[RMDB]
RNA sequence: GGGAACGACUCGAGUAGAGUCGAAAAUGGUUGAUGAACCAUGACCGUGCGGCUAGAGCGUGAUUGACGGCUACGAUCGUCCUCGGACGCAUCCAGUGCUGUAGAGGAUCGUUACUCGGCUCGGUUUCUUUGUGUGUCAUUUCGAUGACACACAAAGAAAAGAAACAACAACAACAAC
Reactivity to 2A3 in 0.01 (KOAc 150mM, MgCl2 10mM, bicine 150mM(pH8.5), 24C), signal-to-noise 4, nucleotides 027 to 126: u020g000g010u010u060g080a300u180g090a050a000c000c000a010u010g030a010c000c020g030u050g030c020g030g030c020u080a020g010a020g050c010g030u040g040a050u030u050g040a020c000g000g030c030u060a010c020g040a040u030c010g010u020c010c000u040c090g080g090a010c020g010c010a030u030c050c040a140g060u030g040c020u070g040u100a070g010a040g160g000a010u010c010g020u030u030a070c010u000c030g000g010c020u030c020g020g000u020u030u000
Reactivity to DMS in 0.01 (KOAc 150mM, MgCl2 10mM, bicine 150mM(pH8.5), 24C), signal-to-noise 2, nucleotides 027 to 126: u000g000g010u000u030g000a200u050g000a020a010c000c030a020u010g030a280c010c000g010u010g060c100g000g000c050u000a010g000a060g000c300g020u040g000a270u040u040g000a030c030g010g000c020u020a170c250g000a010u000c010g000u010c000c000u020c260g000g000a070c050g020c130a020u000c000c130a120g010u000g030c000u000g000u000a150g010a080g030g000a060u000c000g030u040u000a110c040u000c020g000g000c010u010c000g000g000u000u000u000
Structure probing data (2A3 and DMS) for a 177-nucleotide construct. 2A3 adducts were read by reverse transcription with SuperScript II with manganese. The reactions ran in a buffer of 150 mM KOAc, 10 mM MgCl2 and 150 mM bicine (pH 8.5), at 24 C.